[RMDB]
RNA sequence: GGGAACGACUCGAGUAGAGUCGAAAAUCAUGCGAUGAGUACUUCGUCCAAGCCACCACACUCAGACAAACCAUCAUCAAGUGGCUGGAAACAGCCUCCAUUUGGUCAGCUUUCAGGCAGCUGGCUGCCGGUUUUAAGAUUUCGAUCUUAAAACCGGAAAAGAAACAACAACAACAAC
Reactivity to DMS in 0.01 (KOAc 150mM, MgCl2 10mM, bicine 150mM(pH8.5), 24C), signal-to-noise 8, nucleotides 027 to 126: u010c070a060u010g020c100g010a070u000g010a100g020u010a080c110u010u000c060g010u000c040c050a080a100g010c030c020a050c060c070a050c040a070c040u010c070a080g000a070c070a060a080a110c080c050a070u000c060a070u000c100a070a130g010u010g010g010c000u000g000g010a110a090a160c030a020g000c010c000u000c050c130a150u000u000u000g010g010u000c000a010g000c000u000u010u000c150a070g010g010c230a070g010c000u000g010g000c010u000g020
Reactivity to 2A3 in 0.01 (KOAc 150mM, MgCl2 10mM, bicine 150mM(pH8.5), 24C), signal-to-noise 5, nucleotides 027 to 126: u070c020a020u110g040c040g070a060u040g020a050g080u090a110c050u050u070c030g030u000c020c020a030a020g020c000c020a030c020c000a010c000a010c030u040c020a020g030a070c040a040a090a050c030c010a060u110c010a030u050c030a100a110g050u030g050g000c000u010g000g020a040a030a020c010a010g030c030c000u010c050c020a130u120u090u240g000g000u010c010a000g000c010u050u140u180c070a100g130g000c020a000g010c000u000g000g000c000u010g000